[RMDB]
RNA sequence: GGGAACGACUCGAGUAGAGUCGAAAAGAUAUGGAGGAUACCAGGGAGAGGCACUUCGGAAACGAAGUGGCCUCGAGGAUCUGGAUCCUCCUAAGUCAAAAGGUAAUAGACUUCGGUCUAUUACCAAGAAUAUACAUCGCUUCGGCGAUGUAUAUUCAAAAGAAACAACAACAACAAC
Reactivity to 2A3 in 0.01 (KOAc 150mM, MgCl2 10mM, bicine 150mM(pH8.5), 24C), signal-to-noise 2, nucleotides 027 to 126: g010a010u020a010u090g000g000a000g030g000a010u110a300c010c010a000g010g000g010a160g010a020g020g010c000a000c000u010u000c010g000g010a020a010a010c010g000a000a010g000u010g030g090c020c020u010c000g000a020g030g000a030u020c000u000g000g000a000u030c000c000u000c000c000u000a000a000g010u000c020a050a030a060a160g000g000u000a000a000u000a000g010a000c010u160u090c300g050g000u000c000u000a000u000u010a000c000c000a000a010
Reactivity to DMS in 0.01 (KOAc 150mM, MgCl2 10mM, bicine 150mM(pH8.5), 24C), signal-to-noise 2, nucleotides 027 to 126: g000a020u010a130u000g010g010a010g020g000a010u000a140c000c010a010g000g000g010a060g000a010g000g020c000a030c000u010u000c000g010g000a060a040a060c010g030a010a010g010u000g020g040c000c000u000c000g010a120g010g000a110u000c000u000g000g000a040u000c000c010u000c000c000u000a000a060g010u000c020a150a070a150a140g000g020u000a010a000u000a010g000a010c000u000u020c270g020g000u000c000u000a000u000u010a000c000c010a030a030
Overview:
Chemical mapping of a 177-nucleotide RNA with 2A3 and DMS. The reactions ran in a buffer of 150 mM KOAc, 10 mM MgCl2 and 150 mM bicine (pH 8.5), at 24 C. Reactivities are given for positions 27 through 126. Source: RMDB library TTRDES, as collected in RNAgym.